[RMDB]
RNA sequence: GGGAACGACUCGAGUAGAGUCGAAAAAAGAUAUGGAUUCCCUAGUAGCUGACGCACAGGAGGAAGCUUCGGAAACGAAGCUUCUCCCCACCCUGUGAACUACGUCCGAAAGGGAAUCCUAAGUCAAGCAUGAAUAAUUGUUCGCAAUUAUUCAUGCAAAAGAAACAACAACAACAAC
Reactivity to DMS in 0.01 (KOAc 150mM, MgCl2 10mM, bicine 150mM(pH8.5), 24C), signal-to-noise 4, nucleotides 027 to 126: a110a130g000a000u000a040u010g000g000a040u000u000c010c000c000u000a140g030u020a150g000c300u010g010a030c010g000c000a010c010a010g010g000a200g010g000a010a000g000c000u000u000c000g020g010a010a020a050c000g000a020a000g010c000u000u000c000u000c020c000c000c020a300c030c000c000u010g000u000g010a030a030c110u020a300c020g000u000c030c030g010a140a200a100g000g010g000a010a000u000c000c000u000a000a050g000u000c010a070a140
Reactivity to 2A3 in 0.01 (KOAc 150mM, MgCl2 10mM, bicine 150mM(pH8.5), 24C), signal-to-noise 2, nucleotides 027 to 126: a000a020g010a010u020a010u040g000g010a010u010u010c030c000c000u000a040g100u070a010g040c300u230g010a000c000g000c040a000c010a000g000g000a000g000g010a000a000g000c010u020u010c000g000g020a010a000a000c000g000a010a000g020c000u000u000c000u010c000c000c000c000a000c010c000c010u000g010u000g030a010a030c090u210a040c070g030u050c050c040g100a180a040a010g000g000g000a000a000u000c000c000u020a000a000g000u000c040a070a020
Record summary: This 177-nucleotide RNA was probed chemically with DMS and 2A3. For DMS the reverse transcriptase was MarathonRT. For DMS, 3,802 sequencing reads were counted. For 2A3, 8,618 sequencing reads were counted.